Structure probing data (2A3 and DMS) for a 177-nucleotide construct. The DMS profile rests on 1,320 reads. The 2A3 profile rests on 1,292 reads.

RNA sequence: GGGAACGACUCGAGUAGAGUCGAAAAGUACAAUGUUUCGACAUUGUACGAUGGAGCCAUAGCCGAAAGGCAUUUUAAUCCUUGGCUGGCGAAAGCCUAAAAGAAGAAUCCAUUUCGAUGGAUUCAAUACCCUAGACACUUUCGAGUGUCUAGGGUAAAAAGAAACAACAACAACAAC
Reactivity to 2A3 in 0.01 (KOAc 150mM, MgCl2 10mM, bicine 150mM(pH8.5), 24C), signal-to-noise 1, nucleotides 027 to 126: g000u000a010c000a000a000u020g020u030u040u050c090g010a010c010a030u020u010g000u000a000c010g000a000u060g040g050a040g000c000c000a040u120a030g010c010c020g170a180a060a000g000g020c010a000u010u000u010u090a060a100u020c000c010u010u030g000g000c010u000g000g000c010g010a060a000a030g000c000c000u110a070a120a000a010g200a110a010g000a000a000u000c000c000a040u060u090u120c190g080a000u010g020g000a030u000u000c000a000a010
Reactivity to DMS in 0.01 (KOAc 150mM, MgCl2 10mM, bicine 150mM(pH8.5), 24C), signal-to-noise 2, nucleotides 027 to 126: g050u000a010c000a000a000u000g010u010u000u040c220g010a030c020a000u000u000g030u000a010c000g000a070u010g010g010a300g030c000c000a080u000a080g060c000c010g010a080a020a080g020g030c230a060u030u020u010u000a140a160u010c010c000u000u000g000g020c010u000g000g020c030g000a100a060a110g000c000c020u000a030a020a070a050g000a190a090g000a010a000u000c000c050a030u000u000u020c160g030a020u000g010g000a050u010u000c010a030a230